[RMDB]
RNA sequence: GGGAACGACUCGAGUAGAGUCGAAAACAUUAAGUGUUGAUACCCGAAAUCUGCCAGAAAAUGUGGAUAUCGAAAACUCGGUUAUCACCACCACCUUAACCGAGGGUGCUAUUGGCUACGCCAAACACCCUGCACUCAUGUUCGCAUGAGUGCAGGGAAAAGAAACAACAACAACAAC
Reactivity to DMS in 0.01 (KOAc 150mM, MgCl2 10mM, bicine 150mM(pH8.5), 24C), signal-to-noise 1, nucleotides 027 to 126: c160a020u000u000a120a100g000u000g070u000u000g000a120u000a020c020c000c030g000a010a220a040u000c020u000g000c020c110a140g010a140a290a080a060u000g020u000g000g010a010u000a110u000c170g000a000a060a040a170c130u000c020g000g000u000u000a070u000c010a080c050c000a030c050c090a050c150c050u000u000a090a050c040c080g030a000g000g000g000u000g000c040u000a050u000u000g010g010c000u020a160c180g000c000c000a000a060a070c110a080
Reactivity to 2A3 in 0.01 (KOAc 150mM, MgCl2 10mM, bicine 150mM(pH8.5), 24C), signal-to-noise 1, nucleotides 027 to 126: c010a020u080u200a160a170g040u060g010u030u050g010a000u030a030c000c010c030g000a040a040a000u040c010u030g030c050c010a080g170a260a190a000a040u190g100u060g030g000a010u020a050u190c110g100a010a050a050a000c060u010c000g010g000u050u020a020u000c010a030c050c070a010c050c000a040c000c010u090u120a100a090c000c040g060a060g000g000g050u060g040c060u150a160u060u040g010g070c060u080a050c220g000c000c020a000a050a000c030a000
Chemical mapping of a 177-nucleotide RNA with DMS and 2A3. Values are in units of 0.01, from 0 to 300, in steps of 10. The reactions ran in a buffer of 150 mM KOAc, 10 mM MgCl2 and 150 mM bicine (pH 8.5), at 24 C.